[RMDB]
RNA sequence: GGGAACGACUCGAGUAGAGUCGAAAAAGCUUACCGAUGUCAAUGGUGCUGUACGGAGGGUCGUGAAAUGAGCAGCGCAUUCCUCCUUCGAGCACGCGGACAUGUAGAGGGGGAGGGAGCGGCGACAGCCCGUAAUGAGGUUCGCCUCAUUACGGGCAAAAGAAACAACAACAACAAC
Reactivity to DMS in 0.01 (KOAc 150mM, MgCl2 10mM, bicine 150mM(pH8.5), 24C), signal-to-noise 5, nucleotides 027 to 126: a090g000c050u010u020a090c060c040g010a080u010g000u010c020a070a100u050g000g020u000g000c000u010g020u010a090c230g000g000a050g010g000g010u010c030g030u030g010a050a070a080u030g000a130g020c100a250g020c020g020c130a060u010u010c000c000u000c000c010u000u010c130g010a110g000c020a010c030g010c270g000g000a040c060a040u020g020u040a070g040a300g000g000g000g000g010a070g000g000g000a090g000c100g000g000c070g010a080c170a110
Reactivity to 2A3 in 0.01 (KOAc 150mM, MgCl2 10mM, bicine 150mM(pH8.5), 24C), signal-to-noise 6, nucleotides 027 to 126: a000g060c060u060u070a050c030c030g070a060u050g020u040c020a120a130u270g040g010u030g030c000u010g020u050a020c090g020g010a030g020g020g010u020c010g010u030g080a100a130a120u220g010a090g100c070a020g050c010g000c060a070u150u150c000c010u000c000c010u020u030c030g080a040g020c010a010c050g120c030g040g020a020c020a040u040g000u020a040g030a120g020g030g000g010g010a070g030g020g010a070g000c030g000g000c030g020a030c030a010